[RMDB]
An RNA of 177 nucleotides, treated with 2A3 and DMS and read out base by base.
2A3 adducts were read by reverse transcription with SuperScript II with manganese.
Conditions: 150 mM KOAc, 10 mM MgCl2 and 150 mM bicine (pH 8.5), 24 C.
For DMS the reverse transcriptase was MarathonRT.

RNA sequence: GGGAACGACUCGAGUAGAGUCGAAAACAUCGCCGCCAAUCUCGCACUUGCACAAACUUAUAUUGCACUGCAGUAUGGGUCGGGGCGGGAAUGCGAGCCGGGUUCGGACAUGUACCGCCGUGCCCUUAACCGUCCUAAUGUUCGCAUUAGGACGGUUAAAAGAAACAACAACAACAAC
Reactivity to 2A3 in 0.01 (KOAc 150mM, MgCl2 10mM, bicine 150mM(pH8.5), 24C), signal-to-noise 5, nucleotides 027 to 126: c030a080u100c050g000c010c000g030c010c000a040a080u040c000u010c020g000c010a130c040u020u100g000c050a040c030a080a140a010c030u050u010a020u010a010u060u040g040c100a100c300u220g000c010a020g000u010a010u010g020g000g040u040c070g010g050g020g010c020g000g000g010a080a020u050g030c030g040a010g000c000c020g020g010g010u070u110c030g030g030a040c010a060u140g030u070a090c000c050g010c020c020g040u040g000c010c000c000u000u000
Reactivity to DMS in 0.01 (KOAc 150mM, MgCl2 10mM, bicine 150mM(pH8.5), 24C), signal-to-noise 2, nucleotides 027 to 126: c030a130u000c120g030c000c000g000c100c090a080a140u010c000u000c030g000c000a080c060u010u020g030c060a080c070a160a170a110c010u010u010a050u000a040u020u000g030c010a200c150u040g010c000a030g000u000a000u000g000g000g000u010c130g000g000g000g000c050g050g020g010a110a050u020g000c040g020a070g010c190c050g020g000g000u000u000c040g010g020a070c090a030u000g000u010a180c050c030g010c050c020g040u010g000c000c000c000u000u030